[RMDB]
RNA sequence: GGGAACGACUCGAGUAGAGUCGAAAAUAACGCUACAAUCAUAGAAGCGUAUAACCUGUAUACAGCUGGAGAUUAUCAUCUAAUCAUCAAUCCUUCAGAUAAUCUGAAAAUGAAAUUGUCGUUUAAUUCCUCAUUCUGCAUAUCAGACGGCAAUGGAGGUACGUAAACUCUUCGGAGUUUACGUACCAAAAGAAACAACAACAACAAC
Reactivity to DMS in 0.01 (KOAc 150mM, MgCl2 10mM, bicine 150mM(pH8.5), 24C), signal-to-noise 2, nucleotides 027 to 156: u000a140a050c060g010c010u010a110c000a140a140u000c070a140u010a270g050a240a080g020c010g060u000a040u010a170a240c030c050u000g000u030a140u000a070c080a110g050c060u000g020g000a110g000a070u010u010a020u010c050a070u010c090u000a100a080u010c080a230u000c050a110a120u000c050c030u000u000c010a100g040a080u030a030a080u000c050u010g000a100a060a100a160u010g000a020a080a060u000u000g060u000c020g000u010u000u000a030a060u000u000c000c010u010c060a190u000u000c030u010g000c060a050u000a060u000c040a050g010a030c030g060g020c000a110a070u000g020g010a250
Reactivity to 2A3 in 0.01 (KOAc 150mM, MgCl2 10mM, bicine 150mM(pH8.5), 24C), signal-to-noise 3, nucleotides 027 to 156: u110a010a000c000g000c020u070a060c040a170a080u170c050a120u110a100g140a130a000g070c000g000u010a000u050a000a020c000c020u010g030u070a070u040a040c030a010g020c010u060g010g010a050g020a010u050u070a030u140c040a010u020c060u150a120a030u080c060a020u040c030a040a090u060c000c060u060u070c030a010g000a080u120a090a060u090c030u020g030a050a070a040a050u040g020a030a120a010u030u020g010u000c010g000u010u010u070a080a160u080u030c030c050u140c060a060u160u050c020u090g040c040a030u040a060u220c010a020g000a080c010g010g000c000a000a000u040g020g000a070